[RMDB]
RNA sequence: GGGAACGACUCGAGUAGAGUCGAAAACAACGCCGCAUUGUAGCAAACGAGGAGUCCAAGGUGGCGCAGCCUCUCGGGCCUCUCAUUUGCUGCGCUGCAGCGCUGGUUCGCUUGGUACGCCGAGCGCCACUCAUUACGUAUUCGUACGUAAUGAGUGAAAAGAAACAACAACAACAAC
Reactivity to DMS in 0.01 (KOAc 150mM, MgCl2 10mM, bicine 150mM(pH8.5), 24C), signal-to-noise 8, nucleotides 027 to 126: c010a030a050c010g010c000c040g010c010a020u000u000g020u000a010g020c000a000a010a020c070g010a010g010g000a070g010u000c000c000a040a010g020g010u030g020g010c010g020c290a130g010c010c000u010c010u000c080g010g000g000c010c010u000c010u000c000a060u000u000u000g000c000u000g000c000g010c130u000g010c010a060g010c010g020c040u000g010g000u010u010c020g010c000u000u000g000g010u010a110c220g020c010c000g000a010g010c010g010c230
Reactivity to 2A3 in 0.01 (KOAc 150mM, MgCl2 10mM, bicine 150mM(pH8.5), 24C), signal-to-noise 9, nucleotides 027 to 126: c020a000a020c010g000c000c000g000c010a010u000u040g010u020a000g000c000a000a000a010c030g000a000g010g010a010g010u000c010c010a040a030g110g110u100g060g060c190g030c140a040g020c010c000u020c010u040c040g010g000g000c000c000u010c000u000c000a010u000u000u010g000c000u000g000c000g000c000u010g000c000a010g000c000g000c020u030g050g040u100u130c020g000c010u010u020g020g000u050a040c220g030c040c000g010a010g000c000g010c010